[RMDB]
RNA sequence: GGGAACGACUCGAGUAGAGUCGAAAAAGAAACCGAUAUGGAAAUCAACCAAGGCCAGCGGUGCGCCGCGCAGCAUGGUGCUGAUUUCUAGAAUGCCGCCUGCAAGCGCCACGCCAAUGGCAAUCGACAUCACUGAGUCAUUCGUGACUCAGUGAUGAAAAGAAACAACAACAACAAC
Reactivity to DMS in 0.01 (KOAc 150mM, MgCl2 10mM, bicine 150mM(pH8.5), 24C), signal-to-noise 2, nucleotides 027 to 126: a140g010a100a120a200c050c000g040a070u030a160u020g010g000a030a050a140u000c060a080a160c040c010a110a100g000g010c000c050a100g000c300g010g000u000g030c070g040c160c120g000c020g040c070a210g030c020a020u020g030g020u000g010c160u020g000a070u000u000u000c120u000a100g020a110a010u000g010c040c010g010c020c020u030g030c060a090a120g010c040g020c080c100a030c030g000c020c020a030a220u000g010g000c020a030a090u010c070g020a200
Reactivity to 2A3 in 0.01 (KOAc 150mM, MgCl2 10mM, bicine 150mM(pH8.5), 24C), signal-to-noise 1, nucleotides 027 to 126: a000g020a050a020a020c020c020g030a160u050a110u300g060g010a090a030a090u070c040a000a110c000c030a080a060g130g020c010c000a010g000c020g020g010u010g010c050g020c040c020g020c040g000c010a000g010c000a030u140g000g000u060g020c090u050g050a110u020u180u110c060u030a000g010a110a030u090g020c010c060g050c050c000u020g000c050a100a080g010c030g000c040c020a050c040g040c000c000a080a020u040g030g000c000a000a030u110c000g030a020